This 177-nucleotide RNA was probed chemically with 2A3.
Conditions: 150 mM KOAc, 10 mM MgCl2 and 150 mM bicine (pH 8.5), 24 C.
RNA sequence: GGGAACGACUCGAGUAGAGUCGAAAAGUAUGCUACUCCUCGCUUUAGGAACACUAUUCAUUUGCGUACUAUCCUAAUGAAAUCACUCUACGUAAUGUCUGCCAGCGUGAGGAUAAGCGAGAUUAUCCCGCCUGAGCGGUUUCGACCGCUCAGGCGGAAAAGAAACAACAACAACAAC
Reactivity to 2A3 in 0.01 (KOAc 150mM, MgCl2 10mM, bicine 150mM(pH8.5), 24C), signal-to-noise 1, nucleotides 027 to 126: g050u000a000u100g000c000u040a030c040u020c000c000u000c080g000c100u050u030u160a130g090g080a150a130c020a080c040u030a010u030u030c090a150u000u000u100g110c110g000u000a000c040u090a030u040c000c010u100a060a030u010g030a190a000a000u090c070a250c090u000c060u170a000c060g080u120a070a070u080g030u020c010u000g140c000c000a000g060c000g000u000g000a070g000g000a000u000a040a010g000c000g000a000g000a000u000u100a000u160c060